[RMDB]
RNA sequence: GGGAACGACUCGAGUAGAGUCGAAAACCUCGUUAAUCAAUGGGAAAAUCGUAACUGCAAACGACGAUACGUUCGCACUGGCAGCCUAACGGCCGCCGUCCUCUGCCUAGUUCACUGACGGGCUAGUGUCGCAAGACCGGUAGCAAUACCGCCAGAGCAUCGUUAUCUAGUUCGCUAGAUAACGAUGAAAAGAAACAACAACAACAAC
Reactivity to DMS in 0.01 (KOAc 150mM, MgCl2 10mM, bicine 150mM(pH8.5), 24C), signal-to-noise 2, nucleotides 027 to 156: c030c020u000c100g040u000u000a050a130u000c120a120a080u000g010g050g010a090a080a180a090u000c040g010u000a090a120c060u000g000c050a040a050a060c050g030a090c020g010a180u010a120c040g020u000u000c040g020c030a090c060u030g020g020c000a030g000c030c010u010a110a120c270g040g020c020c010g000c020c000g000u010c010c000u010c010u000g000c060c030u000a030g000u000u000c050a270c080u020g020a070c110g000g000g010c030u000a060g010u000g040u000c030g020c200a080a090g040a050c040c010g000g000u010a040g000c110a120a100u000a050c000c000g010c040c000a040g010a160g020
Reactivity to 2A3 in 0.01 (KOAc 150mM, MgCl2 10mM, bicine 150mM(pH8.5), 24C), signal-to-noise 5, nucleotides 027 to 156: c010c000u040c050g020u060u220a150a130u150c090a090a160u190g000g050g070a080a110a010a060u140c040g040u060a080a120c090u100g060c100a090a080a010c040g060a020c040g040a050u050a130c030g070u030u050c060g000c030a030c070u050g010g000c010a010g010c020c030u090a150a060c060g010g010c010c010g000c000c000g030u040c010c000u000c000u000g000c000c000u000a010g010u020u010c030a100c250u210g160a070c160g000g000g000c000u000a010g010u010g050u090c020g000c060a040a110g000a010c020c020g000g000u010a010g020c040a070a040u020a080c020c030g010c010c010a020g010a010g040
Record summary:
Structure probing data (DMS and 2A3) for a 207-nucleotide construct. The RNA was probed in 150 mM KOAc, 10 mM MgCl2 and 150 mM bicine (pH 8.5) at 24 C. For 2A3 the reverse transcriptase was SuperScript II with manganese.